Structure probing data (2A3 and DMS) for a 177-nucleotide construct. High DMS reactivity at an A or C suggests that its Watson-Crick edge is free.
RNA sequence: GGGAACGACUCGAGUAGAGUCGAAAAGAGCAUGGUUCGGAGGUAUGCUAUAGCGGUAUGUGCCGAUUAUGUUCACAUACAGGGAUUUGGCAUCAAAUACCCUUCUAUAGUAUUUGAUUGGGCUAUAGAUAGUAGUGACAUUCGUGUCAUUGCUAUCAAAAGAAACAACAACAACAAC
Reactivity to 2A3 in 0.01 (KOAc 150mM, MgCl2 10mM, bicine 150mM(pH8.5), 24C), signal-to-noise 9, nucleotides 027 to 126: g090a010g010c050a040u080g020g040u110u100c050g040g040a040g030g100u100a020u060g010c000u020a010u050a080g060c110g030g010u020a010u010g020u030g010c020c010g040a020u130u100a110u260g060u110u100c030a010c010a030u060a010c020a020g050g030g010a020u030u050u090g060g010c070a080u110c080a200a040a030u300a270c000c010c000u040u040c020u030a040u050a020g020u010a070u020u050u080g120a120u030u080g020g010g000c020u040a020u040a140
Reactivity to DMS in 0.01 (KOAc 150mM, MgCl2 10mM, bicine 150mM(pH8.5), 24C), signal-to-noise 9, nucleotides 027 to 126: g010a090g010c060a050u010g000g010u010u010c040g000g010a090g010g020u020a040u000g010c020u000a030u010a030g020c300g010g010u000a010u000g010u000g010c300c060g010a140u040u040a110u040g000u030u010c050a040c040a030u010a030c050a090g000g000g000a120u000u010u010g010g000c160a120u030c060a010a010a020u000a060c000c050c100u020u030c060u010a040u020a050g010u000a020u010u010u010g010a080u020u010g000g000g000c040u000a040u020a100